[RMDB]
Overview
The record gives the reactivity of an RNA of 207 nucleotides to 2A3. It was measured as part of the RMDB library M2RFPK. Values cover nucleotides 27 to 156. Conditions: 150 mM KOAc, 10 mM MgCl2 and 150 mM bicine (pH 8.5), 24 C.
RNA sequence: GGGAACGACUCGAGUAGAGUCGAAAAAAAAGAUUUCUGAGACAAACACGCUUCACAAUGUGCGGCAAAGAAACAUUGUUUAUGCAAAGGCACUUCGCAAUGUGUGCUUAAACAUUGCUUAUUCAAAAAAAGAUUUUAGACUUCGGUCUAAAAUCAAGAAUAAACCAUUCUUCGGAAUGGUUUAUUCAAAAGAAACAACAACAACAAC
Reactivity to 2A3 in 0.01 (KOAc 150mM, MgCl2 10mM, bicine 150mM(pH8.5), 24C), signal-to-noise 1, nucleotides 027 to 156: a010a000a030a020g140a020u120u100u150c130u110g090a100g020a120c030a020a150a000c090a040c030g010c000u010u000c020a000c000a020a000u000g000u000g010c030g040g070c030a140a100a100g040a030a050a000c000a020u000u010g080u030u100u040a130u120g060c030a030a060a110g120g000c010a000c000u030u010c010g000c010a000a010u000g000u000g040u000g020c010u090u220a010a010a000c000a010u000u000g000c010u020u080a150u020u140c060a080a000a010a030a030a000a030g010a000u000u050u000u000a000g000a000c000u000u020c270g060g000u010c000u000a000a000a000a000u000c000a000a000